Chemical mapping of a 177-nucleotide RNA with DMS and 2A3. For 2A3, 1,863 sequencing reads were counted.
RNA sequence: GGGAACGACUCGAGUAGAGUCGAAAAGAUAUGGACCCACUACCCACCCUCACGGCUCGGAAACGAGCCAAGAGGAGGUGGUGUCCUAAGUCAAACCACAUAAAGAUGUUCGCAUCUUUAUGUGGAACUUAGUACGACCGUUCGCGGUCGUACUAAGAAAAGAAACAACAACAACAAC
Reactivity to DMS in 0.01 (KOAc 150mM, MgCl2 10mM, bicine 150mM(pH8.5), 24C), signal-to-noise 2, nucleotides 027 to 126: g010a070u000a170u000g040g000a040c020c020c030a050c000u000a140c060c000c010a300c130c010c010u000c000a100c300g000g000c000u000c000g000g000a030a090a290c000g010a030g000c000c000a070a170g000a020g000g000a040g020g000u000g000g010u020g000u000c030c020u020a070a160g030u000c110a120a090a220c000c000a000c010a020u000a010a020a000g000a010u010g000u000u010c210g010c000a020u000c000u000u000u000a000u000g000u000g000g000a000a060
Reactivity to 2A3 in 0.01 (KOAc 150mM, MgCl2 10mM, bicine 150mM(pH8.5), 24C), signal-to-noise 1, nucleotides 027 to 126: g100a080u210a160u300g000g000a030c060c000c010a000c000u210a240c040c030c010a030c020c010c000u000c000a040c060g030g000c030u000c030g030g040a090a050a020c010g000a030g000c000c010a030a020g010a010g000g000a000g000g030u020g000g080u170g010u000c000c010u050a060a020g160u150c100a090a140a170c010c010a000c000a010u000a000a000a000g000a000u020g020u170u230c300g020c160a000u000c000u010u040u020a000u000g000u000g020g000a000a010

2A3 adducts were read by reverse transcription with SuperScript II with manganese.